RNA sequence: GGGAACGACUCGAGUAGAGUCGAAAAAUAGUGUUAUUCGUAACACUAUAUAUCCGAACUCAAGGAUUCGAUCCAGAGACAUGCAUGCUAGCAUGAAAGCAACUGAACAAGCGUUCGCGCUUGUUAAUAUCAACCAAUAUUUCGAUAUUGGUUGAUAAAAAGAAACAACAACAACAAC
Reactivity to 2A3 in 0.01 (KOAc 150mM, MgCl2 10mM, bicine 150mM(pH8.5), 24C), signal-to-noise 7, nucleotides 027 to 126: a000u000a000g010u000g000u010u010a020u040u060c220g030u040a010a010c000a000c000u000a000u000a000u010a010u010c020c010g050a150a060c010u020c060a120a160g040g010a030u110u120c120g090a090u000c010c010a020g000a010g030a140c000a020u020g010c000a000u140g170c060u100a040g020c010a010u030g060a070a020a010g080c030a040a090c070u150g040a010a000c050a010a000g010c010g030u060u090c200g000c010g020c090u000u000g000u000u010a010a010
Reactivity to DMS in 0.01 (KOAc 150mM, MgCl2 10mM, bicine 150mM(pH8.5), 24C), signal-to-noise 8, nucleotides 027 to 126: a020u000a000g010u000g010u000u000a020u000u010c170g020u000a010a010c000a010c000u000a000u000a050u010a120u010c050c020g010a110a090c030u000c030a090a130g010g000a040u000u010c100g010a110u000c020c010a120g000a100g010a230c030a020u000g000c010a120u010g020c210u000a110g010c010a010u000g000a100a080a100g010c140a050a050c130u000g010a040a010c000a010a010g010c000g020u000u020c210g020c010g010c000u000u000g010u000u000a030a110